[RMDB]
RNA sequence: GGGAACGACUCGAGUAGAGUCGAAAAGACGGCUAGUGUCAGGCGUUGAAUGCCUAAUUAAACGACCCUCUCUUUGAACAGCUUCUUGUUCAUUACCAAUAUACCAGCGAGCCUGCUGACAGAAGCACACCUGAUUACUCUUCGGAGUAAUCAGGUGAAAAGAAACAACAACAACAAC
Reactivity to DMS in 0.01 (KOAc 150mM, MgCl2 10mM, bicine 150mM(pH8.5), 24C), signal-to-noise 2, nucleotides 027 to 126: g010a040c300g020g010c050u000a080g020u000g020u000c130a040g000g020c010g000u020u000g030a170a150u010g010c000c020u000a040a070u000u000a070a120a070c060g010a060c300c020c010u010c020u000c060u000u000u000g000a040a030c040a110g000c080u000u000c030u010u020g010u000u000c020a030u010u000a090c050c050a080a100u000a170u000a140c150c020a020g000c020g000a070g020c120c070u010g000c000u010g010a070c120a000g010a030a040g010c060a170
Reactivity to 2A3 in 0.01 (KOAc 150mM, MgCl2 10mM, bicine 150mM(pH8.5), 24C), signal-to-noise 2, nucleotides 027 to 126: g010a020c060g050g000c030u070a020g010u010g040u170c120a000g020g000c050g060u080u190g240a200a050u200g000c000c000u000a040a070u150u170a110a090a050c010g110a080c000c000c000u030c000u000c000u060u010u000g010a040a000c020a030g030c020u060u060c010u060u050g010u020u000c010a020u040u030a050c010c000a070a060u140a000u050a240c030c010a020g000c000g030a050g110c020c080u050g070c010u000g050a030c010a060g030a030a000g020c020a000
Structure probing data (DMS and 2A3) for a 177-nucleotide construct. DMS adducts were read by reverse transcription with MarathonRT. The DMS profile rests on 1,508 reads. Source: RMDB library OK2TST, as collected in RNAgym. For 2A3 the reverse transcriptase was SuperScript II with manganese.